Conditions: 150 mM KOAc, 10 mM MgCl2 and 150 mM bicine (pH 8.5), 24 C. This 177-nucleotide RNA was probed chemically with 2A3.

[RMDB]
RNA sequence: GGGAACGACUCGAGUAGAGUCGAAAAAGCAUAUAAUCGUGAUGCAUUGAUGCCGCGGCAUGGAAAGUAAGGUGACACUUGCCUUCCCUUUCAUUGGCUGCAAUAUUUUCCAAAAGCACGGCACACAGAUGAUGGAUGCCUUCGGGCAUCCAUCAUCAAAAGAAACAACAACAACAAC
Reactivity to 2A3 in 0.01 (KOAc 150mM, MgCl2 10mM, bicine 150mM(pH8.5), 24C), signal-to-noise 1, nucleotides 027 to 126: a010g040c020a040u100a000u100a000a110u150c060g060u060g020a070u020g000c010a000u000u300g030a080u030g110c090c040g040c080g030g000c000a000u070g000g020a000a020a000g020u050a020a010g020g000u040g040a040c050a020c120u070u190g030c000c000u000u040c000c000c000u010u120u050c100a010u010u090g210g000c000u000g010c000a160a000u210a300u040u050u090u020c000c000a160a000a000a050g000c050a030c000g000g000c000a000c000a000c000a020